An RNA of 207 nucleotides, treated with 2A3 and read out base by base. It was measured as part of the RMDB library M2RFPK. For 2A3, 573 sequencing reads were counted. For 2A3 the reverse transcriptase was SuperScript II with manganese.
[RMDB]
RNA sequence: GGGAACGACUCGAGUAGAGUCGAAAAUUGCGCUUGCCUAUUUAGGCAUACUUCUCAGGAUGUCGCGUUGCAGUCCAACAAGAUCCAGGGACUGUACAGAAUUUUCCUAUACCUCGAGUCGGGUUUGAAAACGUUAGGCACUUCGGUGCCUAACGAACCAGGACAUUUGGUUCGCCAAAUGUCCUGGAAAAGAAACAACAACAACAAC
Reactivity to 2A3 in 0.01 (KOAc 150mM, MgCl2 10mM, bicine 150mM(pH8.5), 24C), signal-to-noise 1, nucleotides 027 to 156: u020u090g000c030g000c000u040u020g020c020c010u170a200u190u190u300a050g000g020c010a020u090a040c060u030u020c010u010c040a070g150g000a070u090g050u080c000g020c000g060u020u030g000c010a000g010u020c010c000a030a030c080a230a130g220a220u110c140c110a060g020g010g020a010c010u010g000u020a010c020a010g110a010a000u010u000u000u140c000c020u040a070u030a090c010c030u000c000g000a010g020u000c020g000g000g030u000u060u140g080a050a050a000a000c000g010u000u000a020g000g000c010a000c000u000u090c270g120g000u000g000c000c000u000a000a000c010g000a000a000